[RMDB]
RNA sequence: GGGAACGACUCGAGUAGAGUCGAAAAAGGCUUACAGUUCGGAUAAGACUGCUGAACAAGUUGAAGUCCAAUAGCUAACAGAGGACUGGUAGUAGACAUGGCGGAUAGGUGAUGAGAAAGAUAGCGUACUUCGGUAUUUCUUCGGAAAUACCGAAGUAAAAGAAACAACAACAACAAC
Reactivity to 2A3 in 0.01 (KOAc 150mM, MgCl2 10mM, bicine 150mM(pH8.5), 24C), signal-to-noise 2, nucleotides 027 to 126: a000g080g000c020u040u030a070c020a060g000u070u030c050g010g000a030u050a210a000g020a020c050u050g000c090u060g010a070a020c070a030a180g030u040u060g110a060a000g000u030c020c000a050a120u030a080g000c050u160a040a060c050a040g100a040g010g090a000c040u010g020g020u010a010g010u000a080g020a020c010a040u030g040g010c060g040g040a060u030a060g000g110u040g020a090u020g020a030g050a020a070a000g040a020u110a030g010c030g000u010
Reactivity to DMS in 0.01 (KOAc 150mM, MgCl2 10mM, bicine 150mM(pH8.5), 24C), signal-to-noise 3, nucleotides 027 to 126: a090g010g010c020u010u000a090c090a130g020u010u010c050g000g000a110u000a080a190g000a070c060u010g000c060u000g030a040a060c180a160a040g000u010u030g020a030a060g000u000c040c020a070a080u020a070g000c080u030a090a150c140a060g000a200g000g000a040c040u000g030g000u050a020g010u010a050g000a060c070a030u000g010g010c020g000g010a070u030a050g000g020u000g000a050u010g010a050g000a040a150a090g000a080u020a080g020c090g040u010